Source information
Structure probing data (DMS and 2A3) for a 177-nucleotide construct. The data come from the RNA Mapping Database (RMDB), libraries RFM100 and RFMREP. The RNA was probed in 150 mM KOAc, 10 mM MgCl2 and 150 mM bicine (pH 8.5) at 24 C.
RNA sequence: GGGAACGACUCGAGUAGAGUCGAAAAUGGUGCACUCGCUUGGCACCUAAGCAGUGUUCCGUCAUUGCUUAGUGUGGAAACAACGUUCUGUCGUUGUGGAAACCAAUAACUGCUAACCAUGUCCUACUCAGGAAUAGCCGUUCGCGGCUAUUCCUGAAAAAGAAACAACAACAACAAC
Reactivity to DMS in 0.01 (KOAc 150mM, MgCl2 10mM, bicine 150mM(pH8.5), 24C), signal-to-noise 2, nucleotides 027 to 126: u020g030g000u000g010c070a050c020u020c300g000c280u000u000g010g000c060a050c030c010u000a000a000g000c000a020g000u000g000u000u110c230c160g000u000c000a000u000u000g000c000u000u000a010g040u020g100u000g020g000a300a070a010c000a000a010c000g020u000u010c300u000g000u080c050g000u000u000g010u000g000g030a110a060a240c010c030a090a030u020a130a100c240u000g000c010u040a150a070c030c000a060u000g000u020c010c000u000a060c080
Reactivity to 2A3 in 0.01 (KOAc 150mM, MgCl2 10mM, bicine 150mM(pH8.5), 24C), signal-to-noise 5, nucleotides 027 to 126: u020g010g000u020g010c000a020c020u080c100g120c070u000u010g020g000c000a000c000c000u010a000a000g000c010a000g000u020g000u210u300c040c050g080u210c020a050u010u000g000c000u010u000a020g000u050g000u020g300g060a020a100a000c000a020a000c000g020u170u090c150u300g160u240c020g000u020u010g000u010g020g040a080a030a010c000c000a010a000u070a100a000c000u010g000c010u050a050a040c000c000a000u010g040u010c000c000u000a070c020